[RMDB]
RNA sequence: GGGAACGACUCGAGUAGAGUCGAAAAAAAAGAUAUGGACACCCAUGUUGCUACUUGGGAGCAGAAGUACUCGGAAACGAGUACCUGCGAAGAACAAGUAGGACUCGUGGGUGUCCUAAGUCAAAAAGAGAUAGUGUAUCUUCGGAUACACUAUCUCAAAAGAAACAACAACAACAAC
Reactivity to DMS in 0.01 (KOAc 150mM, MgCl2 10mM, bicine 150mM(pH8.5), 24C), signal-to-noise 1, nucleotides 027 to 126: a070a080a100a130g020a010u010a050u000g000g000a020c010a000c020c000c000a010u010g000u020u000g020c010u000a030c000u010u000g000g000g000a020g060c000a010g000a090a080g070u000a010c000u000c000g000g010a000a000a010c000g010a020g000u000a010c000c000u000g010c000g000a080a110g010a110a180c020a020a020g000u000a010g010g010a140c060u010c030g030u000g020g000g010u000g000u000c000c000u000a000a020g010u000c010a070a100a090a080a070
Reactivity to 2A3 in 0.01 (KOAc 150mM, MgCl2 10mM, bicine 150mM(pH8.5), 24C), signal-to-noise 2, nucleotides 027 to 126: a000a000a000a000g000a030u010a020u030g000g010a000c000a010c010c050c000a010u030g110u140u300g170c010u010a010c000u000u010g000g030g020a020g010c000a010g010a300a020g040u010a000c000u000c000g000g000a000a000a010c000g000a000g020u000a000c000c000u020g010c030g240a290a010g000a000a000c020a010a010g000u000a000g020g130a170c300u000c060g000u000g000g040g010u000g000u010c000c000u000a000a000g010u000c010a000a000a000a090a000